[RMDB]
RNA sequence: GGGAACGACUCGAGUAGAGUCGAAAAACCUCCACCUUCGGGUGGAGGUCGUGCGUAGCUGCGUUAAAUUAAUAGCUACGCUUAAUAAAUUAAUUUAACGCAUAAAACUGUGUUUCGACACAGUUAAGAUACGUUACCAGUUCGCUGGUAACGUAUCAAAAGAAACAACAACAACAAC
Reactivity to 2A3 in 0.01 (KOAc 150mM, MgCl2 10mM, bicine 150mM(pH8.5), 24C), signal-to-noise 3, nucleotides 027 to 126: a010c000c000u030c010c000a010c010c010u040u050c290g160g000g000u000g000g000a010g000g000u010c010g080u040g010c010g010u020a010g000c030u030g000c020g020u000u000a050a090a030u060u120a080a140u140a130g000c000u010a010c020g000c000u020u090a050a010u150a040a050a010u070u080a010a010u050u040u050a020a000c010g020c030a020u180a060a260a010a000c000u000g000u000g010u040u090u060c200g040a000c010a000c000a000g000u010u010a010a010
Reactivity to DMS in 0.01 (KOAc 150mM, MgCl2 10mM, bicine 150mM(pH8.5), 24C), signal-to-noise 2, nucleotides 027 to 126: a030c000c000u020c000c010a010c000c010u000u010c220g040g030g040u000g000g010a010g010g000u000c070g020u000g000c030g000u000a020g020c080u000g000c000g010u000u010a000a030a060u000u000a030a080u010a080g000c010u000a020c020g000c010u000u000a020a040u000a050a070a100u000u010a010a030u010u020u000a010a000c000g000c000a220u010a060a100a040a010c000u000g010u000g000u000u010u010c170g000a040c010a020c000a000g000u000u000a080a090

Conditions: 150 mM KOAc, 10 mM MgCl2 and 150 mM bicine (pH 8.5), 24 C. An RNA of 177 nucleotides, treated with 2A3 and DMS and read out base by base. Reactivities are given for positions 27 through 126. High 2A3 reactivity points to a flexible backbone, as in loops and unpaired stretches. 2A3 adducts were read by reverse transcription with SuperScript II with manganese.